[RMDB]
This 207-nucleotide RNA was probed chemically with 2A3 and DMS. 2A3 adducts were read by reverse transcription with SuperScript II with manganese.
RNA sequence: GGGAACGACUCGAGUAGAGUCGAAAACAACUCAACGCCUGUAUGUACAUCCCAUAACCGCCAUGUAGUGUCGAAUGAGGCAGAAACUAAGUAAUCACCACUUGGAUGAAAAGCAACUCGACCAACACGAGCCAAAUGUCCUUCCAAACGUAACAGAAUCAGUAUAGGGAUUCGUCCCUAUACUGAUAAAAGAAACAACAACAACAAC
Reactivity to 2A3 in 0.01 (KOAc 150mM, MgCl2 10mM, bicine 150mM(pH8.5), 24C), signal-to-noise 8, nucleotides 027 to 156: c020a020a040c030u040c070a070a050c050g060c020c040u060g030u090a090u070g080u040a050c030a120u050c000c010c000a020u070a060a030c040c030g030c020c010a020u100g050u110a070g040u060g030u130c020g060a090a120u130g010a070g090g000c020a010g060a050a050a010c040u040a040a020g050u040a080a120u080c040a050c110c000a030c050u050u030g040g020a080u060g110a100a080a040a010g020c010a020a090c010u010c010g070a080c030c010a040a030c040a010c080g030a010g030c030c010a020a150a030u080g020u040c000c000u040u040c030c010a080a050a020c100g050u110a050a040c040a100g230a190
Reactivity to DMS in 0.01 (KOAc 150mM, MgCl2 10mM, bicine 150mM(pH8.5), 24C), signal-to-noise 3, nucleotides 027 to 156: c050a090a090c060u010c030a110a130c080g010c040c000u000g010u010a060u010g020u000a070c080a130u000c020c010c030a100u010a080a100c060c020g030c000c020a090u010g020u000a090g020u000g020u000c020g020a140a110u000g010a130g000g040c000a090g000a130a110a150c030u000a020a060g020u000a090a070u000c020a110c070c040a090c080u000u000g020g040a120u000g000a040a060a120a080g020c040a060a090c030u000c000g000a100c030c040a100a060c080a080c020g000a060g030c030c020a040a090a100u000g010u000c020c030u000u000c030c010a060a090a090c080g030u000a060a110c060a130g020a140
The data come from the RNA Mapping Database (RMDB), library OK3TST.
For DMS, 6,789 sequencing reads were counted.